[RMDB]
RNA sequence: GGGAACGACUCGAGUAGAGUCGAAAAAGAUAUGGAAGAAUCUCUAGCGUGUUCGACGAUCAUAGAUCUCAAUAUUCGGAAACGAAUAUCUUGGGGCCUAUGGGAGAAUCGGGUUCUUCCUAAGUCACAUUAUUAUUUAGUUCGCUAAAUAAUAAUGAAAAGAAACAACAACAACAAC
Reactivity to 2A3 in 0.01 (KOAc 150mM, MgCl2 10mM, bicine 150mM(pH8.5), 24C), signal-to-noise 4, nucleotides 027 to 126: a010g040a030u090a050u120g010g020a010a020g020a030a030u030c140u060c130u300a260g220c170g120u300g120u180u020c080g210a300c010g000a170u000c000a000u010a010g020a030u020c010u020c010a000a010u010a000u000u000c000g010g000a040a050a050c010g010a010a020u020a010u040c150u080u100g010g000g010g030c010c000u020a000u010g010g020g000a030g000a000a010u070c020g020g050g000u000u000c000u000u000c000c000u010a140a020g040u010c000a000
Reactivity to DMS in 0.01 (KOAc 150mM, MgCl2 10mM, bicine 150mM(pH8.5), 24C), signal-to-noise 5, nucleotides 027 to 126: a090g010a030u000a300u010g000g000a040a020g010a040a010u010c010u010c200u010a190g070c270g010u010g010u000u000c020g000a080c240g000a070u010c000a010u000a000g000a020u000c000u000c000a010a030u010a000u000u000c010g000g000a120a110a180c000g010a010a010u000a010u010c210u000u000g010g020g010g010c100c000u000a000u000g000g000g000a060g010a020a020u000c050g000g010g000u010u000c030u000u000c010c000u000a040a080g010u000c030a190